[RMDB]
RNA sequence: GGGAACGACUCGAGUAGAGUCGAAAAGAGAUCGCGGCUGGGGCUUAGGACCCCACUCCUGCGAGACAGGAGUAAUCCUAAACAGGGUUUUCACCCUUCCUUUAGUUUCCUUCCUCUCCUGGAGAGGGACUAUAUGUCGGUUCGCCGACAUAUAGUCAAAAGAAACAACAACAACAAC
Reactivity to 2A3 in 0.01 (KOAc 150mM, MgCl2 10mM, bicine 150mM(pH8.5), 24C), signal-to-noise 2, nucleotides 027 to 126: g020a000g020a030u060c040g000c040g040g100c050u010g020g000g020g020c000u030u020a030g070g050a110c000c020c020c000a010c000u010c000c040u000g010c050g260a150g040a050c020a000g000g000a000g000u030a000a060u020c000c000u020a050a030a020c180a050g060g020g000u030u100u160u290c130a070c000c020c000u050u100c010c010u070u140u040a030g010u010u020u030c000c000u050u070c030c000u040c000u000c030c200u110g050g010a020g010a000g000g000
Reactivity to DMS in 0.01 (KOAc 150mM, MgCl2 10mM, bicine 150mM(pH8.5), 24C), signal-to-noise 2, nucleotides 027 to 126: g010a090g010a050u000c040g020c060g010g000c300u010g020g010g020g000c070u020u000a030g000g000a190c000c030c020c030a030c030u020c010c000u010g040c030g000a110g000a180c060a000g000g010a020g000u000a120a060u020c040c010u000a010a050a100c210a050g000g010g000u020u000u020u000c170a100c010c000c010u010u000c030c000u020u020u010a090g000u030u040u010c000c030u000u010c000c010u000c020u000c010c110u000g040g000a020g010a040g020g010
Structure probing data (2A3 and DMS) for a 177-nucleotide construct.
For 2A3 the reverse transcriptase was SuperScript II with manganese.
Reactivities are given for positions 27 through 126.
Conditions: 150 mM KOAc, 10 mM MgCl2 and 150 mM bicine (pH 8.5), 24 C.
DMS adducts were read by reverse transcription with MarathonRT.
The data come from the RNA Mapping Database (RMDB), library VIROID.